[RMDB]
RNA sequence: GGGAACGACUCGAGUAGAGUCGAAAACUAUGCAGAUUCGUCUGCAUAGAGACCCGAUGAAGCGGCACUUACACAGCUUCAUACACGUAAGAAGAGCAAUAAAGGGACGAGGGUUCGCCCUCGUCAAUUCCUUAAACCACUUCGGUGGUUUAAGGAAAAAAGAAACAACAACAACAAC
Reactivity to DMS in 0.01 (KOAc 150mM, MgCl2 10mM, bicine 150mM(pH8.5), 24C), signal-to-noise 2, nucleotides 027 to 126: c000u000a010u020g000c000a030g010a050u010u000c220g000u000c010u000g000c000a000u000a000g000a090g000a170c000c010c020g020a040u010g000a010a000g010c010g000g040c100a120c190u010u000a120c190a060c040a100g020c010u000u000c000a010u000a140c060a070c170g010u000a110a050g050a070a060g000a070g010c100a090a050u000a050a100a100g000g000g030a010c000g000a020g010g000g010u010u000c210g010c000c000c000u000c010g000u000c010a020a090